[RMDB]
RNA sequence: GGGAACGACUCGAGUAGAGUCGAAAAGAAUUUACGAGAGUAGGUUCGCUAUACGAGAGUGUAGGUUGCUAUCUAGUAGACGUCUGACAGGGAAAGUCGAUAGCGAUUAUAUCGCGAGUGAUCGAGAGAUCUAGCGGUAUUAUCAGAGACGCUACAGGUACGAACUCUAUUUCGAUAGGGUUCGUACAAAAGAAACAACAACAACAAC
Reactivity to DMS in 0.01 (KOAc 150mM, MgCl2 10mM, bicine 150mM(pH8.5), 24C), signal-to-noise 5, nucleotides 027 to 156: g010a040a020u000u000u000a030c000g010a300g000a300g020u000a010g010g030u000u000c000g000c000u010a080u000a030c010g010a210g000a160g030u010g030u000a040g020g010u000u000g000c020u000a100u000c020u000a100g030u000a050g010a150c010g030u000c020u010g020a170c050a140g020g010g000a110a070a110g000u000c050g010a170u000a110g010c050g020a030u000u000a030u000a080u000c000g020c010g000a190g000u010g020a050u000c010g010a300g000a300g010a020u000c000u000a210g010c010g010g010u000a010u000u000a030u000c030a140g010a120g030a040c020g010c010u000a030c040a210g030
Reactivity to 2A3 in 0.01 (KOAc 150mM, MgCl2 10mM, bicine 150mM(pH8.5), 24C), signal-to-noise 9, nucleotides 027 to 156: g010a010a010u040u030u020a020c020g010a010g000a010g110u040a020g050g060u020u030c030g010c060u090a060u040a140c090g040a020g010a040g130u050g010u070a060g050g040u030u030g000c020u040a090u180c020u020a040g020u010a020g080a140c010g000u000c050u070g030a030c030a080g170g050g110a070a140a040g040u040c030g070a100u110a040g060c030g000a000u010u000a000u010a000u010c000g000c020g030a090g210u150g020a000u000c010g010a010g000a010g000a130u000c000u010a010g000c000g000g000u000a000u020u020a000u010c030a020g020a000g000a110c010g000c010u020a010c010a030g130